[RMDB]
RNA sequence: GGGAACGACUCGAGUAGAGUCGAAAAAACACCAAUACUAUUAUCCAAUGUAGAUUGUGCUGCUAAUCCAGGAACAGUGAAAAGCACAGUCUUUUUGAUUCAACUGGACCCUUAAGCAUACCGAAUAUAUAGGGUAGAUAUUCGUAUCUACCCUAUAAAAAGAAACAACAACAACAAC
Reactivity to 2A3 in 0.01 (KOAc 150mM, MgCl2 10mM, bicine 150mM(pH8.5), 24C), signal-to-noise 1, nucleotides 027 to 126: a000a030c050a020c020c020a010a000u120a140c060u030a050u300u010a160u060c050c040a090a150u090g000u020a020g000a060u000u060g010u020g000c040u030g000c020u060a030a040u010c020c010a030g070g080a130a060c010a080g050u060g130a000a070a050a000g000c040a000c050a150g010u060c000u010u030u010u000u070g040a020u030u020c060a120a060c020u000g030g000a010c010c010c000u050u050a080a010g000c060a030u100a300c100c070g060a140a040u170a000
Reactivity to DMS in 0.01 (KOAc 150mM, MgCl2 10mM, bicine 150mM(pH8.5), 24C), signal-to-noise 6, nucleotides 027 to 126: a060a070c090a100c030c020a050a070u000a140c080u000a050u010u010a090u010c110c090a100a070u000g010u000a040g010a040u000u000g010u010g010c050u000g020c110u010a110a110u000c020c010a080g010g010a080a100c210a070g010u000g000a050a040a060a030g010c010a070c090a070g010u000c000u010u000u000u000u000g000a100u000u000c080a050a100c030u000g000g000a070c040c030c030u000u000a060a080g010c070a060u000a080c100c070g010a090a050u000a100